RNA sequence: GGGAACGACUCGAGUAGAGUCGAAAAACACUCCAGUACUAGCCAUCCUCGUCUCAACCUGUGCACUUCUGGCAACGGUCCUCUUCUACCUCUACCUACUCCAGAUCUUCAAAUUCUACACUAACUCAGUCUUGAUGGUGGUUGCCAUUCAAAUUGCGGAUCAAUCGUUAUUCGUAACGAUUGAUCCAAAAGAAACAACAACAACAAC
Reactivity to DMS in 0.01 (KOAc 150mM, MgCl2 10mM, bicine 150mM(pH8.5), 24C), signal-to-noise 1, nucleotides 027 to 156: a120c050a120c040u000c030c010a020g000u000a110c040u000a130g010c070c060a260u000c190c000u020c070g000u000c050u010c090a060a080c040c010u020g020u000g000c120a120c030u010u010c040u010g010g010c030a050a060c130g040g010u040c000c010u000c050u000u000c030u000a090c030c020u010c000u000a060c000c000u000a050c050u000c000c010a080g030a060u010c020u000u010c040a090a020a120u010u000c010u010a110c050a130c010u000a040a080c050u000c020a120g000u000c050u000u000g030a140u010g030g030u010g000g040u000u000g030c020c060a090u000u010c020a030a090a150u010u010g030c300
Reactivity to 2A3 in 0.01 (KOAc 150mM, MgCl2 10mM, bicine 150mM(pH8.5), 24C), signal-to-noise 2, nucleotides 027 to 156: a000c070a020c040u000c010c000a020g040u040a060c050u070a020g050c030c030a070u060c030c000u010c060g060u010c020u010c060a020a070c010c010u070g020u090g060c060a050c070u070u060c060u120g050g000c020a070a030c040g060g010u050c000c010u050c020u040u020c020u030a070c010c010u040c020u030a080c000c000u020a030c030u000c010c020a050g010a200u010c020u020u060c040a060a090a170u120u010c000u110a050c030a050c120u080a160a040c020u030c100a020g090u000c040u080u100g010a020u050g030g030u000g020g040u070u030g020c000c010a010u090u090c020a080a050a140u240u170g070c140